[RMDB]
RNA sequence: GGGAACGACUCGAGUAGAGUCGAAAAUGAAGCAGAUUGAAACGUCCUGGAACAAACACACCAAGUGGACAUCUCAGGUGCCAUUAGAAUCCCAAGUGACCAGUCCUGAAUGUUGACACCACACUUGGACCGAUUGGUGAUUCGUCACCAAUCGGUCAAAAGAAACAACAACAACAAC
Reactivity to DMS in 0.01 (KOAc 150mM, MgCl2 10mM, bicine 150mM(pH8.5), 24C), signal-to-noise 1, nucleotides 027 to 126: u010g000a090a130g000c000a000g000a110u010u000g030a010a030a060c140g000u010c010c000u000g000g000a140a130c090a040a050a050c190a100c270a060c070c050a070a090g040u010g010g010a050c110a020u030c120u000c010a010g010g020u000g000c040c040a030u000u000a110g010a120a080u000c020c010c000a110a070g010u010g000a040c110c140a110g010u020c010c060u000g000a040a070u000g000u000u000g000a040c100a070c100c150a060c010a040c170u000u000g000